[RMDB]
Structure probing data (DMS) for a 177-nucleotide construct.
Values cover nucleotides 27 to 126.
For DMS, 903 sequencing reads were counted.
DMS adducts were read by reverse transcription with MarathonRT.
The RNA was probed in 150 mM KOAc, 10 mM MgCl2 and 150 mM bicine (pH 8.5) at 24 C.

RNA sequence: GGGAACGACUCGAGUAGAGUCGAAAAAUCAAAAGAGGAGUGUCGGGAAUUUCAUUUAAGCCUAGCCUUUAGGGGACAAUUGGAAUGCUAUACACUAAAGCUGGAGUUGGGGAAAAGAAUAGGCCUCUCCUCUGUAGAUGUUCGCAUCUACAGAGGAAAAAGAAACAACAACAACAAC
Reactivity to DMS in 0.01 (KOAc 150mM, MgCl2 10mM, bicine 150mM(pH8.5), 24C), signal-to-noise 1, nucleotides 027 to 126: a100u000c050a050a080a110a160g000a020g000g000a010g020u000g000u020c130g020g000g000a120a050u010u000u000c040a100u010u000u010a090a240g000c020c000u010a050g000c140c050u010u010u000a070g010g000g000g000a130c130a040a060u000u010g000g000a060a030u000g020c030u000a080u010a080c140a050c130u000a040a040a080g010c050u000g000g010a060g020u010u000g000g000g010g000a060a070a020a040g000a070a150u010a090g010g020c020c040u010c100